The record gives the reactivity of an RNA of 177 nucleotides to DMS and 2A3.
The RNA was probed in 150 mM KOAc, 10 mM MgCl2 and 150 mM bicine (pH 8.5) at 24 C.
DMS adducts were read by reverse transcription with MarathonRT.
Reactivities are rounded to 0.1 and cut off at 0 and 3.
For DMS, 5,347 sequencing reads were counted.
It was measured as part of the RMDB library TTRDEL.
[RMDB]
RNA sequence: GGGAACGACUCGAGUAGAGUCGAAAAGAUAUGGAAGGUAUUUGCUCCGACGAAGAACUCGGAAACGAGGGAGUCGGAGAACUACAAAGUACCUUCCUAAGUCAAAAGAACGCGUUCGCGCGUUCAACUCAUCACUAUUGUUCGCAAUAGUGAUGAGAAAAGAAACAACAACAACAAC
Reactivity to DMS in 0.01 (KOAc 150mM, MgCl2 10mM, bicine 150mM(pH8.5), 24C), signal-to-noise 4, nucleotides 027 to 126: g000a030u000a300u010g000g010a030a010g020g020u000a010u000u000u000g000c000u010c000c010g020a020c000g010a110a150g010a120a170c000u000c000g020g000a110a090a170c010g000a010g000g000g000a090g010u000c000g000g000a000g000a010a030c120u000a210c120a040a020a020g010u010a000c000c000u000u000c000c000u000a010a050g000u000c030a090a080a130a130g000a010a010c000g010c000g010u000u010c250g030c020g030c000g010u000u000c000a060a120
Reactivity to 2A3 in 0.01 (KOAc 150mM, MgCl2 10mM, bicine 150mM(pH8.5), 24C), signal-to-noise 4, nucleotides 027 to 126: g020a030u080a030u150g010g000a000a000g020g000u020a030u010u040u070g010c010u010c000c000g010a010c010g250a300a110g020a080a020c010u010c010g010g050a110a050a050c010g000a000g020g010g010a020g000u000c010g000g020a000g000a010a000c020u140a020c050a010a060a010g090u010a010c000c000u010u000c000c000u010a020a000g040u010c020a000a060a000a190g010a010a010c000g010c010g020u050u080c290g000c000g000c000g140u000u010c010a000a020